[RMDB]
RNA sequence: GGGAACGACUCGAGUAGAGUCGAAAACGGAUUCUCCGGACCUUGCUAACCUCUUUGGAGCCCAUUUUGAAAUAAAGUCAAAAAUCUUAGACCACCCAAACGUGGCCUUAUAUGGAAGGUACAUCGAGGGUGAGUGACAUUUCGAUGUCACUCACCCAAAAGAAACAACAACAACAAC
Reactivity to 2A3 in 0.01 (KOAc 150mM, MgCl2 10mM, bicine 150mM(pH8.5), 24C), signal-to-noise 1, nucleotides 027 to 126: c020g010g000a000u160u020c090u090c050c060g000g130a130c000c160u000u030g050c000u000a000a000c000c030u060c000u000u100u100g000g000a000g000c000c000c000a060u080u140u080u100g030a080a000a010u300a110a290a000g060u000c010a000a000a000a000a080u020c040u050u000a060g000a010c000c000a000c000c060c000a020a100a000c000g010u000g050g000c000c000u020u000a090u020a090u260g140g050a060a000g000g000u130a060c000a060u130c030g070a000